[RMDB]
RNA sequence: GGGAACGACUCGAGUAGAGUCGAAAAUGCUCAAGGUCGACCAGAUCGUCGUAGCCGACGGCGCCGACCUGGCCUGCAGCGCCAACCUUGCCCACCUGCGACGCCGUCACGAUGCCGUUGGGCUGCGCCGACGAUUCAAGUUCGCUUGAAUCGUCGGAAAAGAAACAACAACAACAAC
Reactivity to 2A3 in 0.01 (KOAc 150mM, MgCl2 10mM, bicine 150mM(pH8.5), 24C), signal-to-noise 1, nucleotides 027 to 126: u130g010c020u030c070a020a100g040g030u010c000g030a120c010c080a070g060a250u070c020g050u010c010g040u030a000g030c020c010g000a000c010g000g000c010g010c000c010g080a130c030c040u050g000g000c020c040u060g000c020a020g020c000g000c040c030a040a060c010c090u090u110g020c010c010c000a040c020c020u020g000c040g040a040c090g040c040c030g050u080c050a030c090g010a030u100g000c030c000g010u020u020g120g010g000c020u000g000c010g000
Reactivity to DMS in 0.01 (KOAc 150mM, MgCl2 10mM, bicine 150mM(pH8.5), 24C), signal-to-noise 2, nucleotides 027 to 126: u010g030c030u010c030a040a040g000g020u000c020g010a100c040c080a260g010a090u000c050g020u000c020g020u000a040g010c040c010g010a030c000g010g010c030g050c060c020g050a080c060c060u010g020g020c050c100u000g030c040a020g000c060g000c050c020a050a060c120c060u000u000g010c000c010c050a130c120c030u000g020c010g010a120c240g030c050c020g020u000c040a050c080g000a060u000g000c000c030g000u000u020g030g030g010c010u000g010c040g020